[RMDB]
RNA sequence: GGGAACGACUCGAGUAGAGUCGAAAAGAUAUGGACGUUGUGGGACAUGAGGCCGUGUCGGAAACGACACGACCUCAACAGCCCAAACGUCCUAAGUCAAACGUAAGAGUGUUCGCACUCUUACGAAGGUUGUCCCAUUCUUCGGAAUGGGACAACCAAAAGAAACAACAACAACAAC
Reactivity to 2A3 in 0.01 (KOAc 150mM, MgCl2 10mM, bicine 150mM(pH8.5), 24C), signal-to-noise 1, nucleotides 027 to 126: g000a010u010a010u040g010g090a000c030g000u010u010g300u150g300g030g020a140c300a300u300g000a080g070g000c000c010g020u010g010u010c000g070g000a000a000a000c000g050a000c000a010c000g010a010c020c000u070c030a040a050c080a000g020c000c000c020a000a000a000c020g000u000c000c000u000a030a020g000u000c030a000a100a080c000g010u000a030a000g000a000g000u000g020u060u180c210g250c060a000c010u000c010u020u010a030c010g010a070a050
This 177-nucleotide RNA was probed chemically with 2A3.
The 2A3 profile rests on 1,229 reads.
Conditions: 150 mM KOAc, 10 mM MgCl2 and 150 mM bicine (pH 8.5), 24 C.
The data come from the RNA Mapping Database (RMDB), library TTRDES.
Reactivities are given for positions 27 through 126.